[RMDB]
Chemical mapping of a 207-nucleotide RNA with 2A3 and DMS. 2A3 adducts were read by reverse transcription with SuperScript II with manganese. The 2A3 profile rests on 2,984 reads. DMS adducts were read by reverse transcription with MarathonRT.
RNA sequence: GGGAACGACUCGAGUAGAGUCGAAAAUCCUAAGUCUCACUGGAGAUGGAACAGAGCCGACGAUCUUUAUCGGAAACGAUAAAGGGAGGCUCUUAGUACAUCGAUGAAAGUGAGAUAUGGAAAAACAGGCACACAAGCUUCGGCUUGUGUGCCUGAAGACAGAACAUAACUUCGGUUAUGUUCUGUCAAAAGAAACAACAACAACAAC
Reactivity to 2A3 in 0.01 (KOAc 150mM, MgCl2 10mM, bicine 150mM(pH8.5), 24C), signal-to-noise 2, nucleotides 027 to 156: u020c010c000u020a110a040g010u000c010u000c020a010c010u000g000g040a050g000a010u000g000g010a000a010c010a000g010a000g020c000c010g100a300c000g000a090u000c000u000u000u000a000u000c000g010g060a110a070a040c010g010a000u010a000a010a010g010g000g000a000g000g010c000u000c000u000u000a000g000u000a000c000a010u000c000g030a050u020g030a010a010a000g000u000g000a020g000a000u010a040u020g010g000a070a120a030a010a000c010a000g090g000c070a000c000a010c010a010a000g020c020u110u130c300g040g000c000u010u030g000u000g000u000g010c000c000u000g000a000a000
Reactivity to DMS in 0.01 (KOAc 150mM, MgCl2 10mM, bicine 150mM(pH8.5), 24C), signal-to-noise 1, nucleotides 027 to 156: u010c000c010u000a080a300g000u000c010u000c010a040c030u000g020g020a180g010a010u000g050g020a300a270c300a030g040a010g010c000c010g010a100c170g000a040u000c020u000u000u010a010u010c000g020g030a070a150a270c030g020a010u000a010a020a030g000g020g050a030g010g030c000u000c000u000u000a000g010u030a270c010a040u010c010g010a100u000g000a120a070a050g000u000g000a080g000a000u020a100u020g030g000a070a080a080a070a140c010a000g030g030c010a030c000a030c060a000a010g000c000u000u000c300g060g050c000u010u000g030u000g090u000g000c000c020u000g000a010a100
Overview:
For DMS, 1,467 sequencing reads were counted.